[RMDB]
RNA sequence: GGGAACGACUCGAGUAGAGUCGAAAAUGACGAGAUUCUGGAUGUCCAGUACGAGUUCCGCAGCCGGCCCGUAGGAACGGCUGAGGCCAAGUUCGUGAUCUCCGGCGUGGAACGCACCUUCCGGCUGCGGUAUGAUCUCGUUCGCGAGAUCAUACCGAAAAGAAACAACAACAACAAC
Reactivity to DMS in 0.01 (KOAc 150mM, MgCl2 10mM, bicine 150mM(pH8.5), 24C), signal-to-noise 3, nucleotides 027 to 126: u010g000a070c060g000a150g020a110u010u000c010u000g020g000a300u010g000u010c020c020a050g010u000a100c120g000a220g000u000u010c000c000g030c010a040g030c010c000g000g020c260c020c090g020u000a100g010g010a070a030c050g000g040c060u000g000a050g010g020c130c030a090a150g020u000u000c060g000u000g010a080u010c080u010c020c040g010g010c040g040u020g010g010a040a080c070g010c050a060c090c060u000u010c040c000g010g000c020u010g000
Reactivity to 2A3 in 0.01 (KOAc 150mM, MgCl2 10mM, bicine 150mM(pH8.5), 24C), signal-to-noise 2, nucleotides 027 to 126: u120g000a000c050g000a010g000a180u090u050c010u040g080g060a130u200g160u100c020c010a000g000u050a030c030g020a030g040u110u000c000c010g040c000a020g000c000c000g000g050c020c020c040g090u070a080g080g030a030a030c000g060g010c020u120g030a120g080g110c040c000a090a040g070u080u100c070g050u110g080a160u030c000u020c010c050g000g000c030g030u050g010g020a030a000c030g020c010a060c010c000u060u020c010c030g000g000c070u020g040

Chemical mapping of a 177-nucleotide RNA with DMS and 2A3.
The RNA was probed in 150 mM KOAc, 10 mM MgCl2 and 150 mM bicine (pH 8.5) at 24 C.
Reactivities are given for positions 27 through 126.
It was measured as part of the RMDB library OK2TST.
2A3 is a SHAPE reagent: it acylates the 2'-hydroxyl of flexible nucleotides of all four kinds.